[RMDB]
RNA sequence: GGGAACGACUCGAGUAGAGUCGAAAAGAUAUGGAUGAGCGCAGAUAUGGAACUACGCUGUGCGGAGUGCUGUGUUCGGAAACGAACACAGCCUCGGAUAGCAGCGCCAUGUAGCUCAUCCUAAGUCCGUUAGCUCAGUGUUCGCACUGAGCUAACGAAAAGAAACAACAACAACAAC
Reactivity to 2A3 in 0.01 (KOAc 150mM, MgCl2 10mM, bicine 150mM(pH8.5), 24C), signal-to-noise 2, nucleotides 027 to 126: g030a060u160a030u240g030g010a000u010g030a000g000c050g060c170a060g120a300u160a080u180g040g000a050a050c150u170a070c300g000c000u000g010u000g070c150g110g050a020g010u300g000c010u010g020u000g000u000u010c000g000g000a050a120a010c000g020a000a000c010a000c010a000g000c000c010u000c000g010g010a110u180a110g010c000a000g000c050g020c000c000a020u060g070u090a100g000c000u000c000a010u010c000c000u000a020a020g050u040c010
Reactivity to DMS in 0.01 (KOAc 150mM, MgCl2 10mM, bicine 150mM(pH8.5), 24C), signal-to-noise 2, nucleotides 027 to 126: g000a080u020a300u040g010g010a000u000g010a040g000c010g050c230a200g000a130u000a030u000g000g000a130a040c110u020a250c140g020c000u000g000u000g010c100g000g010a030g000u000g060c010u000g060u000g000u010u020c000g040g010a090a090a300c000g010a000a030c010a010c000a000g020c010c000u000c010g000g040a100u010a110g010c020a020g000c100g010c030c000a010u000g020u000a160g020c000u000c000a000u000c000c000u000a030a060g010u000c060

Chemical mapping of a 177-nucleotide RNA with 2A3 and DMS. For 2A3 the reverse transcriptase was SuperScript II with manganese. The 2A3 profile rests on 2,811 reads.